[RMDB]
Annotation: Conditions: 150 mM KOAc, 10 mM MgCl2 and 150 mM bicine (pH 8.5), 24 C. Chemical mapping of a 177-nucleotide RNA with DMS and 2A3.
RNA sequence: GGGAACGACUCGAGUAGAGUCGAAAAAGACCGAUGGCUUACGAGCCAUCGGUCAACCAGUCGUAGCCGAUGUUCCACAGCAGGGGGCCCAGGACAGACCCCUGCGGAACACCGCGCUCGACGGGAAAUAAAUAGUUCAGUUCGCUGAACUAUUUAUAAAAGAAACAACAACAACAAC
Reactivity to DMS in 0.01 (KOAc 150mM, MgCl2 10mM, bicine 150mM(pH8.5), 24C), signal-to-noise 8, nucleotides 027 to 126: a090g010a010c000c000g020a010u000g000g020c000u010u000a110c170g010a040g010c000c000a000u000c010g010g010u000c010a010a050c010c000a090g010u000c000g010u030a010g010c000c010g000a040u000g000u000u010c000c020a170c200a300g010c010a020g010g000g010g000g010c090c090c090a120g020g010a120c200a100g000a160c000c000c000c010u000g000c000g000g000a010a010c000a000c030c000g000c200g010c010u000c000g000a000c010g000g000g010a090a110
Reactivity to 2A3 in 0.01 (KOAc 150mM, MgCl2 10mM, bicine 150mM(pH8.5), 24C), signal-to-noise 9, nucleotides 027 to 126: a000g000a000c000c000g010a000u000g000g010c010u060u050a060c250g070a030g000c010c000a000u000c000g000g000u000c000a000a000c000c000a010g000u000c010g150u200a000g000c000c000g010a010u000g000u000u000c010c010a060c080a090g000c010a010g000g010g010g030g020c040c090c050a100g090g120a080c050a050g050a070c000c000c000c000u000g000c000g000g000a000a000c000a000c000c000g050c030g000c030u000c000g000a000c000g010g010g010a120a190
Overview
High 2A3 reactivity points to a flexible backbone, as in loops and unpaired stretches. For DMS the reverse transcriptase was MarathonRT.